Source: RMDB library M2PK50, as collected in RNAgym. Chemical mapping of a 177-nucleotide RNA with 2A3 and DMS. The DMS profile rests on 12,304 reads.
RNA sequence: GGGAACGACUCGAGUAGAGUCGAAAACAGCAAUUAUUCGUAAUUGCUGAAUGGCGGACCCAGCGCGGAAGGAGCGCGCAGGACUCCUUCGCCGCCUUAUAAUAAGCAGGUACUUCGGUACCUGCAAAGACCAAUACAAAUUCGUUUGUAUUGGUCUAAAAGAAACAACAACAACAAC
Reactivity to 2A3 in 0.01 (KOAc 150mM, MgCl2 10mM, bicine 150mM(pH8.5), 24C), signal-to-noise 7, nucleotides 027 to 126: c000a000g010c000a010a010u010u020a020u070u120c150g050u060a010a010u010u000g000c010u000g010a020a100u130g010g000c020g020g000a050c000c000c030a030g110c150g000c080g160g020a050a030g030g010a030g020c070g000c030g010c130a030g010g150a150c010u010c010c000u020u010c010g010c000c000g010c000c000u100u130a190u030a190a080u120a120a030g010c000a000g000g000u000a010c000u020u080c170g060g000u000a000c020c000u000g000c000a010a000
Reactivity to DMS in 0.01 (KOAc 150mM, MgCl2 10mM, bicine 150mM(pH8.5), 24C), signal-to-noise 7, nucleotides 027 to 126: c010a010g010c010a000a000u000u000a020u000u010c190g020u000a000a010u000u000g000c000u000g010a050a050u010g010g030c010g000g000a180c030c010c020a110g010c150g020c110g010g010a030a010g000g000a030g020c060g010c190g010c200a080g000g000a180c010u000c010c010u000u000c010g010c010c000g000c000c010u000u010a060u000a080a110u010a080a130g010c010a010g000g000u000a000c000u000u010c140g020g010u000a000c000c000u000g000c000a010a020

The RNA was probed in 150 mM KOAc, 10 mM MgCl2 and 150 mM bicine (pH 8.5) at 24 C.
For 2A3 the reverse transcriptase was SuperScript II with manganese.